Chemical mapping of a 207-nucleotide RNA with 2A3 and DMS. The RNA was probed in 150 mM KOAc, 10 mM MgCl2 and 150 mM bicine (pH 8.5) at 24 C. For DMS, 4,580 sequencing reads were counted. For 2A3 the reverse transcriptase was SuperScript II with manganese.
RNA sequence: GGGAACGACUCGAGUAGAGUCGAAAAACACCAAAACUGAAAACGGAAGGCAAUCCUUCCACGACGAUACUUACUUUCCUUUGAUCGUCGUUACUACUAGCAUAGCCACAAAGGAGAACAAACAUGAGCGCGGACACUGACUUCGGUCAGUGUCCAAGCACCUGAUAUUGUUCGCAAUAUCAGGUGCAAAAGAAACAACAACAACAAC
Reactivity to 2A3 in 0.01 (KOAc 150mM, MgCl2 10mM, bicine 150mM(pH8.5), 24C), signal-to-noise 9, nucleotides 027 to 156: a000c080a090c020c030a060a070a030a050c110u180g060a100a060a030a030c060g010g010a010a000g020g000c140a050a190u260c000c000u000u000c010c000a000c000g000a000c000g000a000u090a180c030u100u040a050c010u090u160u070c020c000u060u010u050g030a010u010c000g000u000c000g000u020u040a030c030u020a020c010u020a020g060c040a140u070a080g050c050c030a070c050a050a040a020g050g020a040g030a060a040c050a110a100a010c050a100u180g070a050g080c110g000c060g040g010a000c000a000c000u000g000a000c000u030u040c160g030g000u000c000a000g000u000g000u000c000c000a000a000
Reactivity to DMS in 0.01 (KOAc 150mM, MgCl2 10mM, bicine 150mM(pH8.5), 24C), signal-to-noise 3, nucleotides 027 to 156: a090c070a200c040c030a090a020a100a250c040u020g000a100a090a110a080c060g020g010a040a010g090g070c090a140a150u000c010c010u000u010c000c010a150c000g020a020c010g030a030u000a050c050u010u000a050c110u010u010u000c030c020u010u000u010g000a060u000c000g000u010c020g010u010u000a050c020u000a070c060u010a080g010c070a150u000a100g000c030c020a160c060a040a030a040g020g010a070g020a080a150c080a040a090a090c090a100u010g000a140g020c040g020c090g020g020a040c010a010c000u000g000a010c000u010u000c300g040g000u000c000a020g010u000g000u000c000c000a010a090